Chemical mapping of a 177-nucleotide RNA with DMS.
RNA sequence: GGGAACGACUCGAGUAGAGUCGAAAAAGUAAGACAGGGGAGAGGAAGCUGGUGGUAGUGCCUGGCCCUGACGACGGAGCCAGAGACUCUUCUGUACAGUGUCUGAGACCACACCAAAGAGAAGGAAACCCAUCUGUCAUUUCGAUGACAGAUGGGUAAAAGAAACAACAACAACAAC
Reactivity to DMS in 0.01 (KOAc 150mM, MgCl2 10mM, bicine 150mM(pH8.5), 24C), signal-to-noise 1, nucleotides 027 to 126: a080g010u000a060a100g000a020c040a070g010g000g010g010a050g020a110g030g000a110a230g000c050u000g000g030u000g020g020u000a080g000u010g020c090c000u020g000g000c020c030c010u030g010a050c200g000a090c180g020g000a030g000c010c000a010g000a110g020a070c000u000c020u000u000c030u000g000u000a100c110a060g030u020g010u000c010u000g000a300g000a020c020c010a040c030a130c050c010a010a100a060g000a040g020a120a060g000g000a080a120

Values are in units of 0.01, from 0 to 300, in steps of 10.